Chemical mapping of a 177-nucleotide RNA with DMS and 2A3. Reactivities are given for positions 27 through 126. High 2A3 reactivity points to a flexible backbone, as in loops and unpaired stretches.
[RMDB]
RNA sequence: GGGAACGACUCGAGUAGAGUCGAAAAGGUGGAAGUCAUAGGUGCGCAACCGUGUCGAGCGAAAGCGAAGCGCCGUAAGGCUUCGGGGACGGGUGAGCCGGCGGCCAGCGGCGAAGCCCAAUAUCUGACUCAACCGGAGAUUCGUCUCCGGUUGAGUAAAAGAAACAACAACAACAAC
Reactivity to DMS in 0.01 (KOAc 150mM, MgCl2 10mM, bicine 150mM(pH8.5), 24C), signal-to-noise 1, nucleotides 027 to 126: g010g000u030g000g000a000a030g000u010c000a060u050a160g000g000u030g120c090g000c140a130a200c060c090g040u020g070u000c060g000a130g000c170g030a060a070a060g000c000g020a160a080g010c000g070c000c000g000u030a030a220g040g000c000u000u000c000g000g050g000g050a150c290g000g000g000u000g000a300g000c000c000g000g070c100g000g010c040c060a080g030c140g060g000c000g030a040a290g010c000c000c000a080a020u090a040u020c060u060g000
Reactivity to 2A3 in 0.01 (KOAc 150mM, MgCl2 10mM, bicine 150mM(pH8.5), 24C), signal-to-noise 1, nucleotides 027 to 126: g130g000u180g010g030a000a010g030u080c050a120u100a140g020g040u090g030c050g030c000a000a120c010c040g020u030g060u050c060g030a100g000c140g100a190a090a000g060c070g030a120a000g020c000g070c020c000g050u120a070a010g000g010c000u010u050c000g000g020g000g000a030c030g010g000g000u170g040a120g000c010c000g050g000c010g020g060c180c020a050g000c000g000g000c020g000a000a000g000c000c000c020a030a000u070a030u000c010u010g030